Description: Conditions: 150 mM KOAc, 10 mM MgCl2 and 150 mM bicine (pH 8.5), 24 C. This 207-nucleotide RNA was probed chemically with DMS and 2A3. For DMS the reverse transcriptase was MarathonRT. 2A3 adducts were read by reverse transcription with SuperScript II with manganese.
RNA sequence: GGGAACGACUCGAGUAGAGUCGAAAAAGUGGACGAUACAUUACACCGAGCAAUUAAAUUACAGUCCACGCUCGGUCAUUAUUCUGGCGAGAGCCAGUUCACAGACAGCUAGCGAAAGGAAGGACCUAGCAGGAAGGAAGGAGCUAGCGCUAGGCCACAGCCCAUAUAGUUUCGACUAUAUGGGCUGAAAAGAAACAACAACAACAAC
Reactivity to DMS in 0.01 (KOAc 150mM, MgCl2 10mM, bicine 150mM(pH8.5), 24C), signal-to-noise 2, nucleotides 027 to 156: a100g000u010g010g000a070c000g000a180u000a100c110a110u010u010a100c060a130c020c040g020a040g010c000a120a190u010u010a070a060a120u000u010a110c050a120g030u000c010c000a030c080g030c010u000c020g000g030u000c080a050u010u000a100u000u000c020u000g000g030c020g020a280g000a290g000c000c000a020g000u000u010c060a100c100a200g000a040c050a080g010c030u000a040g010c040g020a110a030a090g000g010a060a110g000g000a050c040c020u000a040g010c040a110g000g030a070a070g000g010a070a060g000g000a120g020c020u000a060g010c070g000c010u010a040g000g010c000c010a210
Reactivity to 2A3 in 0.01 (KOAc 150mM, MgCl2 10mM, bicine 150mM(pH8.5), 24C), signal-to-noise 4, nucleotides 027 to 156: a000g030u010g010g000a030c070g030a060u110a150c080a100u160u120a050c060a020c070c010g000a000g010c000a050a130u100u140a180a150a050u190u170a170c080a050g030u000c010c010a000c000g000c000u000c000g000g030u010c010a030u020u300a070u110u070c010u010g010g000c000g020a060g000a000g040c010c010a000g000u070u080c090a060c000a020g120a070c010a000g010c020u050a020g020c030g140a090a040a020g070g050a040a040g030g010a040c000c010u020a000g010c010a010g000g060a050a040g050g010a000a030g010g020a030g010c010u010a000g000c000g000c030u020a010g010g010c000c010a020
About this RNA: The 2A3 profile rests on 2,696 reads. Values cover nucleotides 27 to 156. Source: RMDB library OK3TST, as collected in RNAgym.